[RMDB]
RNA sequence: GGGAACGACUCGAGUAGAGUCGAAAAGCUCUGUAAUGGGAUGGGAUCCGAAGCCCCAUUGAGGGAUAAUACAGGCUCUCCCAUCCAACUCCUAUUCCAACACGUCCUCGUCGUACUGAGUGGUAACUAAGGUAUAGCUCCUUCGGGAGCUAUACAACAUUUUUCAGUGGUUCGCCACUGAAAAAUGAAAAGAAACAACAACAACAAC
Reactivity to 2A3 in 0.01 (KOAc 150mM, MgCl2 10mM, bicine 150mM(pH8.5), 24C), signal-to-noise 3, nucleotides 027 to 156: g000c020u010c040u090g110u200a110a080u160g080g000g000a000u000g000g000g030a040u250c010c020g040a080a040g050c020c010c000c040a110u140u210g080a300g010g000g020a040u100a210a060u170a220c120a070g010g030c010u000c000u010c010c000c000a000u000c010c000a000a000c010u000c010c010u030a070u030u070c020c010a080a020c030a020c080g010u020c030c000u030c020g070u030c020g010u050a060c010u020g020a040g050u040g060g030u060a100a090c090u070a140a030g090g000u000a000u000a000g000c000u000c000c000u000u050c060g030g000g000a000g020c000u000a000u000a000c000a000a000
Reactivity to DMS in 0.01 (KOAc 150mM, MgCl2 10mM, bicine 150mM(pH8.5), 24C), signal-to-noise 2, nucleotides 027 to 156: g000c020u000c040u010g000u000a080a070u010g020g000g000a010u000g010g050g010a090u010c020c030g020a110a240g010c040c000c000c020a300u000u000g020a110g050g030g010a080u000a100a100u000a070c060a270g010g060c040u000c100u000c010c020c000a070u000c020c010a050a010c080u000c000c010u000a070u000u010c000c020a050a080c050a080c020g000u010c000c010u010c070g050u000c070g010u000a080c060u030g010a160g030u000g000g000u000a030a190c090u000a070a100g010g000u000a000u000a020g000c000u010c000c130u010u010c300g040g020g010a010g000c000u000a000u000a000c010a030a150